[RMDB]
RNA sequence: GGGAACGACUCGAGUAGAGUCGAAAAGGACUGCGCAGUCCGGCAACAUCAGCAGAGAGCCCGCUAUACGUGACGGAUUGGCUGAAGCGUACAGAAAUAUUGAGCCUCCUGCAAGAGGCAGCCAAGCCAGAGAUAUUGUGUUCGCACAAUAUCUCUGAAAAGAAACAACAACAACAAC
Reactivity to DMS in 0.01 (KOAc 150mM, MgCl2 10mM, bicine 150mM(pH8.5), 24C), signal-to-noise 4, nucleotides 027 to 126: g010g000a040c020u000g010c180g020c140a110g000u000c020c020g010g030c060a050a050c040a050u000c080a090g000c040a070g010a140g000a110g020c030c020c040g000c050u000a060u000a060c060g000u000g010a200c080g010g000a210u000u000g000g000c010u000g000a060a300g000c030g010u000a040c060a050g000a070a100a080u000a140u010u010g000a160g010c020c000u000c030c020u000g030c220a090a120g000a030g000g000c020a060g000c040c000a030a060g010c160
Reactivity to 2A3 in 0.01 (KOAc 150mM, MgCl2 10mM, bicine 150mM(pH8.5), 24C), signal-to-noise 2, nucleotides 027 to 126: g020g020a020c040u030g020c170g040c170a040g010u000c000c000g010g020c010a050a050c010a080u120c030a000g010c050a010g080a010g000a020g120c020c020c010g000c020u050a040u000a080c060g030u050g060a010c020g100g000a090u050u060g030g020c010u020g020a040a020g020c000g000u020a030c020a010g140a050a190a010u200a080u130u120g020a040g010c000c020u000c010c030u040g040c000a040a030g000a010g040g000c000a000g010c030c000a020a000g040c020
Structure probing data (DMS and 2A3) for a 177-nucleotide construct. For 2A3, 2,679 sequencing reads were counted. DMS adducts were read by reverse transcription with MarathonRT. It was measured as part of the RMDB library RFMREP. 2A3 is a SHAPE reagent: it acylates the 2'-hydroxyl of flexible nucleotides of all four kinds. The reactions ran in a buffer of 150 mM KOAc, 10 mM MgCl2 and 150 mM bicine (pH 8.5), at 24 C. For 2A3 the reverse transcriptase was SuperScript II with manganese.